[RMDB]
Structure probing data (2A3 and DMS) for a 177-nucleotide construct. The 2A3 profile rests on 1,386 reads. 2A3 adducts were read by reverse transcription with SuperScript II with manganese. For DMS, 1,210 sequencing reads were counted. Conditions: 150 mM KOAc, 10 mM MgCl2 and 150 mM bicine (pH 8.5), 24 C. It was measured as part of the RMDB library RFMREP.
RNA sequence: GGGAACGACUCGAGUAGAGUCGAAAACUUUGAUGAGUACGACUAAGUGGUGCAUGGCCGUUCACAACAUGUGAGGUGACUUUUAGGUUUAUUGCUGUAAUGUGUGAGACCCUCAGCUACGGCGACUGUCUUUGAGUUAGUUCGCUAACUCAAAGACAAAAGAAACAACAACAACAAC
Reactivity to 2A3 in 0.01 (KOAc 150mM, MgCl2 10mM, bicine 150mM(pH8.5), 24C), signal-to-noise 2, nucleotides 027 to 126: c000u010u070u130g120a080u070g020a010g060u070a010c030g020a030c110u060a060a020g060u030g100g020u050g030c040a040u040g040g000c040c020g000u030u040c080a040c000a120a060c020a070u150g040u050g030a020g000g030u050g040a040c050u060u130u070u170a070g010g050u050u070u070a080u080u070g000c020u000g010u070a080a110u100g070u020g020u030g060a020g020a050c010c020c000u000c020a020g050c000u010a010c000g000g000c000g020a020c060u010
Reactivity to DMS in 0.01 (KOAc 150mM, MgCl2 10mM, bicine 150mM(pH8.5), 24C), signal-to-noise 2, nucleotides 027 to 126: c050u000u020u020g000a070u020g020a120g010u000a030c060g010a050c060u020a090a140g010u000g010g000u000g030c090a080u000g000g020c030c010g000u000u000c050a040c090a040a070c090a070u000g010u010g020a070g010g000u000g070a060c050u000u000u030u000a060g020g010u000u000u010a080u060u010g010c040u000g000u010a050a090u000g010u000g000u000g010a070g010a090c070c030c040u020c120a120g010c060u000a040c050g020g000c010g020a080c190u010